[RMDB]
RNA sequence: GGGAACGACUCGAGUAGAGUCGAAAACUUUACCUUAGGAAGUGCAAUCAGGUGAGCACUAAGGCUAUCCUGCAGGUACCCAGUAGGUCAUCUGAGAGGAGACAAGGAGAUGGUGAGUGUGCCUGGGAUUAUCAUCCGCCUUCGGGCGGAUGAUAAUAAAAGAAACAACAACAACAAC
Reactivity to DMS in 0.01 (KOAc 150mM, MgCl2 10mM, bicine 150mM(pH8.5), 24C), signal-to-noise 1, nucleotides 027 to 126: c150u000u000u000a040c020c020u000u000a060g000g000a160a090g010u010g040c050a100a150u000c070a020g030g030u000g020a190g000c050a030c030u000a060a100g010g030c120u010a100u000c000c000u000g030c050a010g020g020u000a010c020c020c060a130g000u000a120g030g010u000c060a040u010c030u010g000a070g000a150g030g030a120g000a050c060a070a090g020g000a030g010a060u010g000g020u010g000a030g000u000g020u000g020c000c000u000g010g010g000
Structure probing data (DMS) for a 177-nucleotide construct.
The data come from the RNA Mapping Database (RMDB), library OK2TST.